The record gives the reactivity of an RNA of 177 nucleotides to 2A3 and DMS.
For DMS, 726 sequencing reads were counted.
The RNA was probed in 150 mM KOAc, 10 mM MgCl2 and 150 mM bicine (pH 8.5) at 24 C.
The 2A3 profile rests on 698 reads.
Values cover nucleotides 27 to 126.
The data come from the RNA Mapping Database (RMDB), library RFMREP.
RNA sequence: GGGAACGACUCGAGUAGAGUCGAAAAUAUGUCUGAACAAUGACGCCAUCGUUUUCUGGGUCUUCGAAGCAGUUGCAAAGAAAUGCCCAGAUGGAGGACAGAGGGCCAAACCACCCCAGUGAAUUCAGCUGUAAAUAGACUUCGGUCUAUUUACAGCAAAAGAAACAACAACAACAAC
Reactivity to 2A3 in 0.01 (KOAc 150mM, MgCl2 10mM, bicine 150mM(pH8.5), 24C), signal-to-noise 1, nucleotides 027 to 126: u220a050u020g010u000c010u050g040a040a000c050a090a100u190g050a030c020g040c040c000a080u080c050g030u000u030u140u040c020u010g040g010g000u000c030u000u000c020g080a110a040g000c060a120g130u300u290g080c020a140a000a030g010a060a020a010u110g000c000c010c010a000g010a030u000g010g070a040g000g030a010c030a020g090a090g030g010g080c050c040a000a130a040c010c000a030c000c000c000c000a050g020u020g150a080a110u150u100c050a040
Reactivity to DMS in 0.01 (KOAc 150mM, MgCl2 10mM, bicine 150mM(pH8.5), 24C), signal-to-noise 2, nucleotides 027 to 126: u020a110u000g010u020c020u000g000a170a150c150a080a100u000g000a090c100g030c110c120a100u000c060g020u000u000u020u000c010u000g000g010g030u000c300u010u030c020g030a120a240g010c020a240g010u010u010g010c020a060a190a260g000a020a020a050u000g000c030c000c000a070g000a040u000g020g010a140g000g000a060c050a080g020a150g030g000g030c030c180a010a070a080c040c030a130c020c000c000c090a120g000u030g000a120a120u010u000c100a110